This 207-nucleotide RNA was probed chemically with DMS and 2A3.
The reactions ran in a buffer of 150 mM KOAc, 10 mM MgCl2 and 150 mM bicine (pH 8.5), at 24 C.
It was measured as part of the RMDB library M2RFPK.
For DMS the reverse transcriptase was MarathonRT.
For 2A3 the reverse transcriptase was SuperScript II with manganese.
RNA sequence: GGGAACGACUCGAGUAGAGUCGAAAAACGUCCUCGUUGUACAGAACGGUAACAUGUUUUCCGAACAUCCGCGCUUGGGUAUACGAGUAUACACCUUACCCAACCCUCGCCAACGGGGAGGAUGGAAUUAAGGAGAGGGCCUUCGGGCCCUCUCCAACAUACUCAAGUUCUUCGGAACUUGAGUAUGAAAAGAAACAACAACAACAAC
Reactivity to DMS in 0.01 (KOAc 150mM, MgCl2 10mM, bicine 150mM(pH8.5), 24C), signal-to-noise 1, nucleotides 027 to 156: a030c070g000u000c000c000u000c010g030u000u000g010u000a130c050a080g030a050a070c010g020g010u000a080a130c100a080u000g000u000u000u000u000c050c040g000a110a110c050a090u000c000c000g010c020g010c070u030u030g010g010g020u000a040u000a120c060g010a160g050u010a210u000a040c110a120c060c010u000u000a040c030c010c010a060a090c010c020c000u000c060g000c130c050a070a120c050g050g000g010g000a030g020g000a050u000g010g030a070a170u000u000a110a130g010g030a030g010a030g060g060g070c000c000u000u000c200g070g020g010c020c020c010u000c000u000c000c010a010a030
Reactivity to 2A3 in 0.01 (KOAc 150mM, MgCl2 10mM, bicine 150mM(pH8.5), 24C), signal-to-noise 1, nucleotides 027 to 156: a080c050g100u050c010c010u040c030g040u060u030g030u020a080c070a160g110a270a080c050g020g000u090a080a050c110a180u120g040u020u070u130u080c020c020g020a040a030c020a010u010c010c000g030c010g050c240u000u000g040g000g000u010a100u020a110c150g060a060g140u030a080u040a180c110a050c010c020u030u010a010c000c000c000a020a020c000c000c040u020c000g080c060c120a160a170c020g000g000g000g000a000g000g000a010u020g000g090a060a060u090u150a180a110g010g000a000g000a010g000g040g010c010c010u000u060c090g060g000g000c000c000c020u000c000u010c000c000a000a000